[RMDB]
RNA sequence: GGGAACGACUCGAGUAGAGUCGAAAAAUAUCGCCAGUGCUGUACCCGCGCUGGCACGCCUGGCCCGUUCUUAUCGGUUGGCGAUUGUUCACGGCAACGGGCCGCAGGUGGGGCUGCUGGCAUUGCAACCCGAAGCAGUAUUCGUACUGCUUCGGGUAAAAGAAACAACAACAACAAC
Reactivity to DMS in 0.01 (KOAc 150mM, MgCl2 10mM, bicine 150mM(pH8.5), 24C), signal-to-noise 2, nucleotides 027 to 126: a060u010a030u000c150g050c000c010a030g020u000g010c060u000g010u000a130c050c010c060g000c030g030c010u000g010g000c000a020c150g000c020c010u010g020g000c000c010c010g010u010u000c090u000u020a100u010c090g040g010u000u000g040g010c030g010a090u000u000g030u000u000c090a050c140g000g000c200a030a030c000g000g010g000c050c020g010c100a010g010g030u000g010g000g010g000c020u000g010c030u000g030g020c050a070u010u010g000c120a130
Reactivity to 2A3 in 0.01 (KOAc 150mM, MgCl2 10mM, bicine 150mM(pH8.5), 24C), signal-to-noise 1, nucleotides 027 to 126: a020u030a050u090c040g010c010c020a040g010u010g000c040u120g100u180a140c040c020c000g000c030g000c030u000g010g000c010a000c010g000c000c000u040g020g000c000c040c000g000u020u030c060u100u200a130u060c020g090g190u120u100g060g040c070g020a060u070u140g110u130u090c100a090c140g030g000c030a030a030c020g010g000g000c020c000g000c040a000g010g030u060g010g040g020g010c000u010g000c000u020g000g140c020a040u000u240g000c020a050